Overview
Chemical mapping of a 207-nucleotide RNA with 2A3. Conditions: 150 mM KOAc, 10 mM MgCl2 and 150 mM bicine (pH 8.5), 24 C. The data come from the RNA Mapping Database (RMDB), library M2RFPK. Values cover nucleotides 27 to 156. For 2A3, 1,030 sequencing reads were counted.
[RMDB]
RNA sequence: GGGAACGACUCGAGUAGAGUCGAAAAGUCUCCUUGAGAGCUUGGCCGUCGGGCCUUACACCCCGACUUGCUGAGUUUCUCUAGGAGAGUCCCUUUCCCAGCCAGAGGUGGCUGGUCAAACAAUACCAAAACUCUUGCUAGUUCGCUAGCAAGAGAAGCUGCCUAAUAACUUCGGUUAUUAGGCAGCAAAAGAAACAACAACAACAAC
Reactivity to 2A3 in 0.01 (KOAc 150mM, MgCl2 10mM, bicine 150mM(pH8.5), 24C), signal-to-noise 1, nucleotides 027 to 156: g030u030c000u010c020c000u000u000g000a010g000a000g000c000u000u020g010g020c020c010g000u000c000g020g020g070c030c050u100u100a110c100a030c020c000c000c000g000a010c000u060u200g000c010u010g010a020g020u070u300u010c000u010c010u020a000g020g000a000g000a010g010u000c010c000c020u010u030u040c010c020c000a000g050c010c000a000g020a020g020g000u000g000g050c000u030g020g070u190c010a000a020a060c040a100a000u010a010c010c000a030a020a140a140c020u000c000u000u000g010c000u000a000g010u060u010c150g020c110u000a000g000c010a010a000g000a000g000a000a000